[RMDB]
Overview: An RNA of 177 nucleotides, treated with 2A3 and DMS and read out base by base. 2A3 is a SHAPE reagent: it acylates the 2'-hydroxyl of flexible nucleotides of all four kinds. Conditions: 150 mM KOAc, 10 mM MgCl2 and 150 mM bicine (pH 8.5), 24 C. The data come from the RNA Mapping Database (RMDB), library OK2TST.
RNA sequence: GGGAACGACUCGAGUAGAGUCGAAAAUGCCGAACGCGCGGGCCGCCACCGCAGAAGAAGCAGCUCGAUAGUAGGGAAAUCACGACCUCGCCGAUUCUGCAGGAUCGGGUGCCAGAGGCGAAGGUAGAACUAUUCCAGUGUUCGCACUGGAAUAGUUAAAAGAAACAACAACAACAAC
Reactivity to 2A3 in 0.01 (KOAc 150mM, MgCl2 10mM, bicine 150mM(pH8.5), 24C), signal-to-noise 3, nucleotides 027 to 126: u040g000c020c010g050a160a070c020g010c020g000c040g040g010g020c020c040g080c020c000a030c000c020g010c010a000g010a040a000g000a040a000g010c000a020g020c010u010c040g090a120u070a120g140u090a060g100g110g030a060a110a080u150c040a020c060g030a060c010c000u040c060g000c020c000g020a020u010u010c020u040g000c030a160g050g020a090u190c120g040g000g040u080g030c020c020a050g010a060g070g030c010g030a040a010g010g000u050a040g030
Reactivity to DMS in 0.01 (KOAc 150mM, MgCl2 10mM, bicine 150mM(pH8.5), 24C), signal-to-noise 5, nucleotides 027 to 126: u010g010c020c010g010a100a110c050g020c040g010c030g000g010g010c020c050g000c060c010a100c030c010g000c040a030g000a050a050g000a200a140g020c010a040g000c180u000c040g010a110u010a090g020u000a120g020g010g010a060a110a090u020c080a140c070g000a070c040c010u000c090g030c010c000g000a280u000u000c020u000g000c040a110g020g000a070u000c060g010g010g010u010g010c040c030a080g010a090g010g010c020g000a110a090g010g020u000a060g010